[RMDB]
RNA sequence: GGGAACGACUCGAGUAGAGUCGAAAACGCUGGGUUACACUACCAGGAGGGCAGUUUCGAGCGUUGAAAUACUGAAGCGCGCACGGUAUGGAGCUCGAAACUGCCCUUAUUGGGUAGGUAACCUGUGCUGAAGCGCGCACGGCAACCGAAAGGUGCGGCUAAAAAUAUUGUUCGCAAUAUUUUUAGCAAAAGAAACAACAACAACAAC
Reactivity to DMS in 0.01 (KOAc 150mM, MgCl2 10mM, bicine 150mM(pH8.5), 24C), signal-to-noise 1, nucleotides 027 to 156: c110g060c040u000g010g000g020u000u000a080c020a120c010u010a030c030c000a180g030g020a060g070g010g020c010a010g000u000u000u000c000g000a000g030c030g050u000u010g010a180a150a060u000a050c000u000g000a060a100g020c030g050c010g000c030a300c050g000g000u030a050u020g000g000a120g010c010u020c010g000a020a000a010c000u000g000c000c000c000u000u000a020u000u000g020g000g040u000a010g030g000u010a000a000c000c020u020g020u000g040c010u000g020a080a050g030c010g070c020g010c020a300c040g000g010c010a110a090c020c000g020a070a140a140g020g010u010g060c000g020
The record gives the reactivity of an RNA of 207 nucleotides to DMS. DMS adducts were read by reverse transcription with MarathonRT. It was measured as part of the RMDB library RNAMAK.